[RMDB]
RNA sequence: GGGAACGACUCGAGUAGAGUCGAAAAGACGCGAGAGACGCGAGACGCGCAAUGGCAGAAGCCGCAAUAGAUUAUACGACGCAAGAGGCAAGACGGAGAGCGCGCAACUUGCAUAAAUAACCAAGAAGGAUAGGUGGAGGUUCGCCUCCACCUAUCCAAAAGAAACAACAACAACAAC
Reactivity to DMS in 0.01 (KOAc 150mM, MgCl2 10mM, bicine 150mM(pH8.5), 24C), signal-to-noise 1, nucleotides 027 to 126: g030a080c140g000c000g000a160g000a040g000a060c080g010c090g030a140g000a060c090g000c000g010c000a080a000u150g080g030c000a010g030a140a100g000c000c000g030c060a000a010u000a030g030a060u000u030a230u000a160c160g040a030c030g030c090a170a070g000a040g030g000c060a060a180g000a130c190g000g000a030g000a140g000c000g080c270g010c000a080a000c000u000u000g010c000a040u110a000a000a180u000a090a160c130c010a150a150g000a190a100
Reactivity to 2A3 in 0.01 (KOAc 150mM, MgCl2 10mM, bicine 150mM(pH8.5), 24C), signal-to-noise 1, nucleotides 027 to 126: g060a000c030g010c000g070a020g100a010g000a160c000g000c060g070a020g000a010c020g120c000g000c100a000a260u110g030g000c060a060g040a190a000g070c090c000g010c050a010a010u010a100g080a000u110u100a030u130a020c000g000a000c040g110c080a050a000g000a000g170g000c050a000a000g000a000c170g040g010a000g000a000g000c000g000c060g000c000a000a000c000u100u180g000c000a040u000a250a120a010u070a000a090c060c100a060a100g030a040a000